The data come from the RNA Mapping Database (RMDB), library OK3TST. Chemical mapping of a 207-nucleotide RNA with DMS and 2A3.
RNA sequence: GGGAACGACUCGAGUAGAGUCGAAAAACAGACUGCGGUGCGUGACGUGCUGGCCGACAAUAGCCCGACGCUCCCGAACCACUACGCGUAUGGCGACGACGGGACGGCGGUAAGUGAGUCUGAUACGGCCCUUGGCAACGAACUUGUCAACGUGUCGCUUAAAACCUGUCUUCGGACAGGUUUUAAGAAAAGAAACAACAACAACAAC
Reactivity to DMS in 0.01 (KOAc 150mM, MgCl2 10mM, bicine 150mM(pH8.5), 24C), signal-to-noise 2, nucleotides 027 to 156: a090c020a160g000a040c030u000g000c000g040g010u000g000c050g050u010g010a100c050g030u000g010c030u010g020g020c000c030g000a160c030a000a140u010a300g010c140c000c000g010a070c010g010c030u000c020c020c000g000a120a120c060c010a100c060u000a030c060g010c180g050u040a100u000g020g000c000g000a100c040g000a300c050g010g020g010a010c050g010g000c010g000g010u000a040a110g010u000g010a150g000u000c010u000g000a140u000a050c000g000g030c000c010c070u000u000g020g000c000a020a060c080g010a090a190c130u000u010g040u000c010a050a040c030g010u000g030u010c000g000
Reactivity to 2A3 in 0.01 (KOAc 150mM, MgCl2 10mM, bicine 150mM(pH8.5), 24C), signal-to-noise 3, nucleotides 027 to 156: a000c020a010g060a000c000u060g000c000g000g060u130g000c040g040u060g080a100c070g030u100g020c010u060g100g050c050c030g030a040c050a080a120u080a070g020c010c000c000g000a000c010g010c130u000c000c000c000g020a060a070c020c000a050c160u250a080c110g030c010g100u190a150u220g220g000c030g010a100c000g020a010c020g050g020g010a020c000g000g000c020g020g020u040a070a040g070u040g110a020g010u020c040u060g020a070u070a200c010g030g000c020c000c000u040u050g010g000c020a030a000c110g060a060a090c020u030u040g020u030c010a050a000c050g070u090g000u000c000g000
Reactivities are rounded to 0.1 and cut off at 0 and 3.